[RMDB]
RNA sequence: GGGAACGACUCGAGUAGAGUCGAAAAGAUAUGGAUCACACGAGCGACGAAGUUAGUCGGAAACGACUAACAGAGCUCUAUGUGAGUCCUAAGUCAAAAGAGCUGUCGGGUUCGCCCGACAGCUCAAUCCAUGUAUGAACUUCGGUUCAUACAUGGAAAAAGAAACAACAACAACAAC
Reactivity to DMS in 0.01 (KOAc 150mM, MgCl2 10mM, bicine 150mM(pH8.5), 24C), signal-to-noise 3, nucleotides 027 to 126: g010a040u000a170u010g000g000a140u010c000a020c020a060c300g000a010g020c000g000a190c280g000a110a160g000u000u000a000g010u010c000g020g000a040a040a080c010g010a000c000u000a000a000c000a010g010a050g000c010u000c000u000a130u010g000u000g000a090g010u000c000c000u010a020a110g010u010c010a070a080a120a160g000a010g000c010u000g020u000c000g010g000g030u000u010c240g010c000c000c010g010a000c000a000g020c010u000c000a010a040
Reactivity to 2A3 in 0.01 (KOAc 150mM, MgCl2 10mM, bicine 150mM(pH8.5), 24C), signal-to-noise 2, nucleotides 027 to 126: g020a000u000a020u070g000g000a000u020c010a000c010a000c050g000a010g010c000g300a300c030g000a120a010g000u000u000a000g000u000c010g010g030a020a020a010c000g010a000c010u000a000a010c020a000g000a000g020c040u000c030u040a060u230g030u000g030a060g060u030c000c000u010a000a010g000u010c010a020a060a100a170g000a040g000c010u030g000u000c000g000g030g150u080u200c300g100c110c000c000g070a000c020a010g020c000u010c000a000a020
Structure probing data (DMS and 2A3) for a 177-nucleotide construct. The RNA was probed in 150 mM KOAc, 10 mM MgCl2 and 150 mM bicine (pH 8.5) at 24 C. For 2A3, 2,406 sequencing reads were counted. Source: RMDB library TTRDEL, as collected in RNAgym. For 2A3 the reverse transcriptase was SuperScript II with manganese.